RNA sequence: GGGAACGACUCGAGUAGAGUCGAAAAUAGUAGCGCAGAGUGUCUGCGCGGAUCGAUCGCGCGGUACGCUGAUCAGCGCGAUCGGCCGUACGUGAUCGAGUGUGAUGGCCCUGCGCUGCGCGUACUGCGCAGUCGGGACCUUCGGGUCCCGACUGCGAAAAGAAACAACAACAACAAC
Reactivity to 2A3 in 0.01 (KOAc 150mM, MgCl2 10mM, bicine 150mM(pH8.5), 24C), signal-to-noise 1, nucleotides 027 to 126: u080a040g070u040a000g000c010g000c010a000g130a010g140u300g040u020c040u090g010c000g030c090g010g000a110u050c040g000a000u010c040g020c000g000c010g080g030u080a040c030g000c300u140g060a150u060c030a040g120c060g000c030g050a030u030c000g000g010c030c020g050u160a060c020g070u040g080a140u110c040g010a090g130u160g050u130g090a060u120g020g030c000c010c000u110g000c010g000c020u010g020c000g000c000g020u000a060c000u040g030
Reactivity to DMS in 0.01 (KOAc 150mM, MgCl2 10mM, bicine 150mM(pH8.5), 24C), signal-to-noise 1, nucleotides 027 to 126: u000a120g000u000a100g000c020g000c000a020g010a220g040u010g010u000c010u000g040c010g000c000g020g010a060u010c060g010a080u010c080g020c020g030c030g050g020u000a050c090g010c000u050g000a030u010c030a060g010c000g000c040g000a020u000c200g000g020c000c020g020u010a040c020g040u000g020a060u000c050g020a120g030u000g010u000g000a080u010g000g020c010c010c080u000g010c040g010c000u000g010c020g000c070g020u010a050c030u010g010